[RMDB]
RNA sequence: GGGAACGACUCGAGUAGAGUCGAAAAAGGUGGUUAUCACUAAGGAAGUUCCUCAUUUCUACGAAGAGGAAUAUGAAGUGGAAGUGCCAUGUUUAGCCACUGAACUGGUGCAACCAAUGGUGGGUACGACAUAACCUAGGUUCGCCUAGGUUAUGUCAAAAGAAACAACAACAACAAC
Reactivity to DMS in 0.01 (KOAc 150mM, MgCl2 10mM, bicine 150mM(pH8.5), 24C), signal-to-noise 5, nucleotides 027 to 126: a100g010g040u000g000g000u000u030a060u030c030a020c010u000a130a110g010g010a130a150g000u000u000c010c000u000c010a090u020u010u010c100u050a130c180g010a070a110g010a020g010g000a030a010u000a030u030g000a100a090g010u010g000g000a020a300g010u000g020c000c010a020u050g000u010u020u010a050g000c070c070a020c070u000g010a020a030c030u010g000g010u010g000c060a040a200c020c020a070a060u030g010g000u010g000g000g000u030a100c160
Reactivity to 2A3 in 0.01 (KOAc 150mM, MgCl2 10mM, bicine 150mM(pH8.5), 24C), signal-to-noise 9, nucleotides 027 to 126: a000g100g000u080g010g040u140u100a160u240c050a030c090u130a060a060g100g030a160a080g060u020u010c000c010u010c020a080u050u150u080c070u120a110c120g060a070a070g010a020g050g070a020a020u140a130u160g110a110a050g060u030g040g040a050a040g040u020g040c010c000a030u100g020u010u020u020a030g020c020c010a060c060u020g010a010a010c010u010g020g000u050g010c020a050a030c010c020a030a080u070g070g020u080g020g000g020u070a020c120